An RNA of 177 nucleotides, treated with DMS and read out base by base.
RNA sequence: GGGAACGACUCGAGUAGAGUCGAAAAAGCGCCUUGCUGGGCUCCUGGGUUGGACUCCCUCUCUGUGCCCCUGCUCCAGGCACCCAUUGGCUCCAUCCUCCUGGUUGUGCUCUGCACCCCCUGCUCCAAUGUGACUACCUUUCGAGGUAGUCACAUUAAAAGAAACAACAACAACAAC
Reactivity to DMS in 0.01 (KOAc 150mM, MgCl2 10mM, bicine 150mM(pH8.5), 24C), signal-to-noise 2, nucleotides 027 to 126: a130g000c140g030c060c040u000u010g030c100u000g000g000g000c040u000c050c050u000g020g010g010u010u010g010g020a130c060u000c040c020c020u000c050u000c050u000g040u010g020c050c030c000c040u010g000c030u000c050c030a100g000g010c090a060c030c050c040a130u000u000g010g010c030u000c020c050a110u000c060c010u000c040c030u000g010g010u010u000g030u010g010c000u000c040u010g010c050a160c010c030c000c020c030u000g010c080u000c090c080